[RMDB]
RNA sequence: GGGAACGACUCGAGUAGAGUCGAAAAACAAUCAGUUCAAGCAUAUCGAGGUUACCUUCACCAAAGGUAUCAACGCCGCCAUAGGACUCGUACCCACACAGACGUACGUGAAGUGCCUCGACGAACAAGCUAGCUACAGAUUCGUCUGUAGCUAGCUAAAAGAAACAACAACAACAAC
Reactivity to DMS in 0.01 (KOAc 150mM, MgCl2 10mM, bicine 150mM(pH8.5), 24C), signal-to-noise 1, nucleotides 027 to 126: a180c100a220a150u010c140a160g000u000u000c020a070a180g030c100a220u030a120u000c000g030a040g040g050u020u000a080c120c020u000u000c000a070c030c200a120a230a060g010g000u000a000u030c160a050a120c280g000c210c020g030c050c110a050u000a080g000g000a110c040u020c230g000u000a090c020c030c030a090c180a150c080a030g000a050c170g000u000a030c150g000u000g000a010a000g000u000g020c000c000u000c000g000a020c120g000a030a040c050a100
Reactivity to 2A3 in 0.01 (KOAc 150mM, MgCl2 10mM, bicine 150mM(pH8.5), 24C), signal-to-noise 2, nucleotides 027 to 126: a010c080a030a050u160c050a060g030u050u000c030a070a060g060c050a120u130a040u170c020g010a010g010g000u030u100a100c040c000u010u010c000a000c020c020a060a070a010g050g000u030a060u090c020a000a080c070g000c020c020g000c080c070a100u080a120g020g040a060c000u000c030g000u000a010c000c010c010a070c010a000c010a050g150a110c030g100u150a000c040g010u050g020a020a000g010u000g000c020c010u010c020g000a010c010g030a020a000c010a040